[RMDB]
RNA sequence: GGGAACGACUCGAGUAGAGUCGAAAACUGCUACGUAGGAUCUAGUACGUACUAGGUACAUCAUAGUACGUAUGCGCAGGCCUCAGGCCUGUGGCCGCGCGUACGAUCCUGAUCCGCAGAUCGUACACCUCUAUUUGGUCUUCGGACCAAAUAGAGGAAAAGAAACAACAACAACAAC
Reactivity to DMS in 0.01 (KOAc 150mM, MgCl2 10mM, bicine 150mM(pH8.5), 24C), signal-to-noise 4, nucleotides 027 to 126: c030u000g010c040u010a100c220g000u010a080g020g000a020u000c020u010a220g020u000a020c050g000u000a010c000u010a010g010g020u010a130c290a140u000c050a060u000a000g010u000a000c000g000u000a020u000g000c020g010c020a060g040g020c000c020u000c060a050g020g020c160c100u010g010u010g010g020c000c050g000c070g020c080g010u000a040c160g000a020u000c020c010u000g000a030u020c180c120g020c050a070g010a070u000c060g000u000a080c150a170
Reactivity to 2A3 in 0.01 (KOAc 150mM, MgCl2 10mM, bicine 150mM(pH8.5), 24C), signal-to-noise 2, nucleotides 027 to 126: c010u020g020c050u050a040c090g110u060a060g000g030a010u000c020u070a050g020u020a030c010g000u010a000c010u000a000g110g060u160a220c050a150u140c020a060u050a010g020u000a010c000g010u020a050u130g000c010g000c040a080g000g010c010c010u150c070a120g070g120c030c140u090g000u010g010g000c000c000g070c020g000c020g020u050a020c050g000a000u000c000c000u010g010a050u020c010c010g010c020a010g000a040u040c030g020u050a030c010a060